Chemical mapping of a 207-nucleotide RNA with 2A3. The reactions ran in a buffer of 150 mM KOAc, 10 mM MgCl2 and 150 mM bicine (pH 8.5), at 24 C. The data come from the RNA Mapping Database (RMDB), library RNAMAK. Reactivities are given for positions 27 through 156.
RNA sequence: GGGAACGACUCGAGUAGAGUCGAAAAGUUUGUGUGUUCGCACACAAACAAAAAACCUUUGUGAAUUAGGGUUCAUCGAUCUAUCACCAGCCCAUUGGGCUGGGAUAGGGAGAAUUUAAUUCACUCUGGUAAAAAGCUAUUAGUUCGCUAAUAGCAACAUGACACAUAGCUUCGGCUAUGUGUCAUGAAAAGAAACAACAACAACAAC
Reactivity to 2A3 in 0.01 (KOAc 150mM, MgCl2 10mM, bicine 150mM(pH8.5), 24C), signal-to-noise 2, nucleotides 027 to 156: g000u000u000u010g000u000g000u010g010u030u180c230g190c020a000c000a000c060a000a050a040c020a000a200a000a000a000a030c020c000u020u000u020g000u010g010a000a000u010u000a070g010g100g070u000u090c060a120u210c110g070a020u000c000u020a000u000c040a090c300c000a010g000c000c030c090a130u120u300g010g000g000c000u010g000g000g000a000u000a000g010g010g000a020g010a000a020u030u080u050a000a000u000u000c000a010c000u010c010u000g000g030u150a110a070a080a030a000g000c000u000a000u010u010a010g060u050u080c300g000c130u000a000a000u000a000g020c000a000a010